[RMDB]
RNA sequence: GGGAACGACUCGAGUAGAGUCGAAAAGAUAUGGAUACGUUCAACAGCAUGCCACUCGGAAACGAGUGCAUGACAUGAACGAUCCUAAGUCAAAAGUGAUCAGCACACUUCGGUGUGCUGAUCACAAGAAUAUUUGACAGUUCGCUGUCAAAUAUUCAAAAGAAACAACAACAACAAC
Reactivity to DMS in 0.01 (KOAc 150mM, MgCl2 10mM, bicine 150mM(pH8.5), 24C), signal-to-noise 5, nucleotides 027 to 126: g000a030u000a260u020g000g000a000u000a100c010g010u000u000c010a040a080c250a150g000c010a010u000g000c140c060a010c000u000c000g010g000a050a050a130c000g010a020g000u000g010c010a000u000g000a050c080a180u010g010a010a000c000g010a070u000c000c000u010a020a100g000u000c020a110a080a120a120g010u000g010a010u000c000a010g000c000a010c000a010c000u000u010c220g020g000u000g020u000g000c000u000g000a010u000c000a000c010a030a060
Reactivity to 2A3 in 0.01 (KOAc 150mM, MgCl2 10mM, bicine 150mM(pH8.5), 24C), signal-to-noise 4, nucleotides 027 to 126: g020a000u050a010u100g010g010a050u170a300c000g010u010u000c020a150a150c040a230g140c000a010u010g110c150c070a050c020u010c010g000g010a020a040a020c000g000a010g010u000g000c000a000u000g030a030c020a060u040g000a010a000c000g000a000u010c000c000u000a040a010g030u010c020a010a020a100a130g020u010g000a010u000c020a000g030c030a000c010a010c030u080u190c300g020g000u000g000u000g010c000u010g010a000u000c000a010c000a010a000